[RMDB]
The record gives the reactivity of an RNA of 177 nucleotides to 2A3 and DMS. It was measured as part of the RMDB library TTRDES. Conditions: 150 mM KOAc, 10 mM MgCl2 and 150 mM bicine (pH 8.5), 24 C. DMS adducts were read by reverse transcription with MarathonRT. 2A3 adducts were read by reverse transcription with SuperScript II with manganese.
RNA sequence: GGGAACGACUCGAGUAGAGUCGAAAAGAUAUGGAUGUACGCAACAACAGCCCAUCUGGGUCGGAAACGACCCUGGGACAUGUUGAUGUACAUCCUAAGUCAAAAUCUCUACCUUCGGGUAGAGAAACCACUAUGUUCAGUUCGCUGAACAUAGUGGAAAAGAAACAACAACAACAAC
Reactivity to 2A3 in 0.01 (KOAc 150mM, MgCl2 10mM, bicine 150mM(pH8.5), 24C), signal-to-noise 3, nucleotides 027 to 126: g010a010u050a020u100g000g000a000u000g000u020a000c000g000c010a030a050c060a060a030c050a190g010c020c000c020a060u080c190u240g000g000g000u020c010g020g030a030a040a010c000g000a030c000c000c000u000g000g020g010a020c080a250u300g000u020u000g090a290u100g000u000a000c000a000u000c000c000u000a050a000g000u000c020a040a050a150a300u020c000u010c010u010a010c010c040u030u070c300g160g000g000u000a000g000a010g000a000a010a000
Reactivity to DMS in 0.01 (KOAc 150mM, MgCl2 10mM, bicine 150mM(pH8.5), 24C), signal-to-noise 2, nucleotides 027 to 126: g000a040u000a300u000g000g000a020u010g010u000a000c010g000c020a030a010c000a030a100c300a140g000c000c000c000a060u020c280u000g000g000g030u010c000g000g000a050a080a170c000g040a020c000c000c000u000g000g020g000a030c100a130u010g000u000u000g000a090u010g020u000a010c000a010u010c000c000u000a060a030g000u000c040a080a120a090a080u000c000u000c000u000a010c000c000u010u020c270g040g010g010u000a010g000a020g010a010a060a150